[RMDB]
About this RNA:
An RNA of 177 nucleotides, treated with 2A3 and DMS and read out base by base. Values cover nucleotides 27 to 126. Conditions: 150 mM KOAc, 10 mM MgCl2 and 150 mM bicine (pH 8.5), 24 C. For 2A3, 3,878 sequencing reads were counted. DMS adducts were read by reverse transcription with MarathonRT.
RNA sequence: GGGAACGACUCGAGUAGAGUCGAAAAGCAUUUCACUAUACAGUGAGUAACUGUGUGCCCGACCAGCUUCGAUAGUGCGGUCAUGUUCCGACCAAUAUUCGUUAGUGAUGUGGUAGUUGACGGGCGCUAAGUACGACCUAUUCGUAGGUCGUACUUAAAAAGAAACAACAACAACAAC
Reactivity to 2A3 in 0.01 (KOAc 150mM, MgCl2 10mM, bicine 150mM(pH8.5), 24C), signal-to-noise 5, nucleotides 027 to 126: g050c040a100u070u090u070c060a050c060u050a060u120a300c040a030g000u030g050a050g110u140a050a040c040u020g020u000g030u050g160c000c000c010g020a060c050c000a000g030c010u000u020c020g030a040u030a120g170u090g140c050g000g030u010c010a030u160g240u230u050c070c030g020a030c010c000a030a010u080a090u060u050c040g070u110u080a080g020u070g150a140u110g030u060g050g030u030a060g050u060u100g050a020c010g000g000g000c020g000c000
Reactivity to DMS in 0.01 (KOAc 150mM, MgCl2 10mM, bicine 150mM(pH8.5), 24C), signal-to-noise 8, nucleotides 027 to 126: g020c100a120u010u000u010c010a060c060u000a170u010a100c090a030g030u000g010a120g010u000a090a130c050u000g020u010g040u000g000c010c010c000g010a140c070c020a140g000c020u000u000c030g010a040u000a090g020u000g010c300g010g000u000c020a100u010g000u000u000c120c060g000a020c020c010a060a210u000a130u000u010c030g000u000u010a060g020u000g020a100u000g020u010g000g000u000a070g010u000u010g010a210c020g000g010g020c010g030c050